[RMDB]
RNA sequence: GGGAACGACUCGAGUAGAGUCGAAAAGAUAUGGAGCGUGAUGGACAUGAUCCGGUGUCGGAAACGACACCCGGGAUCAACAGCCAUACGCUCCUAAGUCAAAGGUCCUACCUUCGGGUAGGACCAAGAUUCACUGAGACUUCGGUCUCAGUGAAUCAAAAGAAACAACAACAACAAC
Reactivity to DMS in 0.01 (KOAc 150mM, MgCl2 10mM, bicine 150mM(pH8.5), 24C), signal-to-noise 2, nucleotides 027 to 126: g020a000u000a060u020g020g000a030g020c010g030u020g030a040u000g000g000a000c060a300u010g000a000u000c000c000g000g030u000g010u010c000g020g010a020a010a020c000g000a000c000a020c010c050c300g050g020g020a010u000c000a100a020c270a170g010c030c000a030u000a030c010g000c000u010c000c000u000a010a050g000u000c020a200a110a210g010g010u000c000c000u000a010c010c000u000u030c210g010g000g010u000a000g010g000a000c000c000a020a010
Reactivity to 2A3 in 0.01 (KOAc 150mM, MgCl2 10mM, bicine 150mM(pH8.5), 24C), signal-to-noise 2, nucleotides 027 to 126: g010a000u070a000u030g000g000a000g010c020g000u200g230a080u000g030g030a010c230a300u300g010a030u020c000c000g030g010u000g000u000c010g000g040a020a000a020c000g000a010c000a000c010c000c040g100g010g030a000u010c020a020a060c140a060g000c000c010a010u010a000c010g000c000u000c000c000u010a010a000g000u010c000a000a020a150g010g000u000c010c010u000a010c000c000u090u230c300g160g000g000u000a000g000g010a010c000c010a010a020

An RNA of 177 nucleotides, treated with DMS and 2A3 and read out base by base. For DMS the reverse transcriptase was MarathonRT. Values cover nucleotides 27 to 126. The 2A3 profile rests on 2,976 reads. The DMS profile rests on 1,567 reads.